Conditions: 150 mM KOAc, 10 mM MgCl2 and 150 mM bicine (pH 8.5), 24 C.
Chemical mapping of a 177-nucleotide RNA with 2A3 and DMS.
RNA sequence: GGGAACGACUCGAGUAGAGUCGAAAAGAAAGAAAGAAACAGGCGGCAGCGCCGCGCGCUACUCCGGCGCCAGGACUGUCCUCACCGAGUCAGGUACCUGAAGUAGCGCGCGGUGUCUCCUCCUAAAAUUUAAUAUAUCUUUCGAGAUAUAUUAAAUAAAAGAAACAACAACAACAAC
Reactivity to 2A3 in 0.01 (KOAc 150mM, MgCl2 10mM, bicine 150mM(pH8.5), 24C), signal-to-noise 2, nucleotides 027 to 126: g070a040a070a000g050a020a120a020g050a030a120a030c080a040g000g000c020g020g050c140a000g000c010g000c000c000g000c000g000c000g000c000u000a000c000u000c010c030g010g010c030g020c000c000a070g110g050a000c010u040g060u170c010c040u060c020a090c030c060g010a000g000u010c010a010g000g020u020a060c000c000u020g040a100a010g000u000a000g000c000g000c000g000c000g000g000u000g000u020c000u000c000c000u020c000c000u060a080a080a000
Reactivity to DMS in 0.01 (KOAc 150mM, MgCl2 10mM, bicine 150mM(pH8.5), 24C), signal-to-noise 3, nucleotides 027 to 126: g000a110a110a110g000a080a090a060g000a110a140a080c080a010g000g020c070g000g010c140a010g010c020g010c020c000g020c030g000c010g020c000u000a010c000u010c010c300g000g000c070g030c000c000a090g020g000a020c010u010g000u030c040c030u010c140a090c130c150g020a040g000u000c020a080g010g010u000a080c020c000u010g010a040a040g000u000a000g000c000g000c000g000c010g000g000u000g000u040c010u000c000c000u000c000c000u000a020a040a080
Notes:
For 2A3, 3,675 sequencing reads were counted.